[RMDB]
RNA sequence: GGGAACGACUCGAGUAGAGUCGAAAAAAGUGAUUAUUCGUAAUCACUUCACGCCGGGCGCGGUGGCGCGUGCCUGAAGUCCCAGCUACUCGGGAGGCUAAACGACGUACCCGUUCGCGGGUACGAACUUUACUUUCUGCUUCGGCAGAAAGUAAAGAAAAGAAACAACAACAACAAC
Reactivity to DMS in 0.01 (KOAc 150mM, MgCl2 10mM, bicine 150mM(pH8.5), 24C), signal-to-noise 2, nucleotides 027 to 126: a000a000g010u000g000a010u010u000a010u000u010c230g010u000a020a000u000c000a000c000u000u000c070a060c160g020c030c000g010g000g000c000g010c000g000g010u010g010g000c010g000c010g010u000g030c000c010u000g030a110a100g020u000c000c000c020a050g000c010u000a120c020u000c090g010g000g010a040g000g020c010u000a030a050a070c140g000a250c020g020u000a000c000c000c000g010u000u010c180g020c010g000g020g000u010a000c000g010a030a060
Reactivity to 2A3 in 0.01 (KOAc 150mM, MgCl2 10mM, bicine 150mM(pH8.5), 24C), signal-to-noise 2, nucleotides 027 to 126: a010a000g000u010g010a000u010u030a020u030u080c160g030u050a020a000u000c000a000c000u050u040c100a090c100g020c000c010g010g000g000c020g000c000g000g020u000g000g000c000g020c010g000u000g020c010c000u060g080a080a050g090u000c010c010c010a000g010c060u300a200c010u090c130g000g030g000a010g000g020c050u080a070a080a030c090g120a010c000g000u000a000c000c020c000g010u020u010c300g000c000g050g030g000u000a000c000g000a020a000